[RMDB]
RNA sequence: GGGAACGACUCGAGUAGAGUCGAAAAGACGCCUUUAGAAGAAGAGGCUAGGGGGUAUUCCGGUGUGGGAGACUUAGUAAUAUGCAACGCUAAUUGCAUAAGAUUGUAGGACGGAAUUUACAGUCUUUAGAGAUAAGCACGUUCGCGUGCUUAUCAAGUAAUGCUCUUGCUUCGGCAAGAGCAUUACAAAAGAAACAACAACAACAAC
Reactivity to 2A3 in 0.01 (KOAc 150mM, MgCl2 10mM, bicine 150mM(pH8.5), 24C), signal-to-noise 1, nucleotides 027 to 156: g070a020c010g010c000c000u090u090u060a250g050a300a000g000a040a010g000a050g020g020c000u040a070g000g010g060g040g000u090a110u050u090c080c030g050g050u250g120u240g050g000g000a050g010a000c000u000u060a030g040u090a170a050u040a040u190g010c000a000a020c090g060c120u100a110a020u080u010g020c000a040u010a050a040g020a060u030u100g050u040a030g000g060a010c050g030g060a030a000u100u070u100a050c000a000g000u040c000u000u030u100a100g040a020g000a090u010a000a000g030c010a010c000g040u070u110c190g000c000g070u000g020c000u000u000a000u000c000a030a000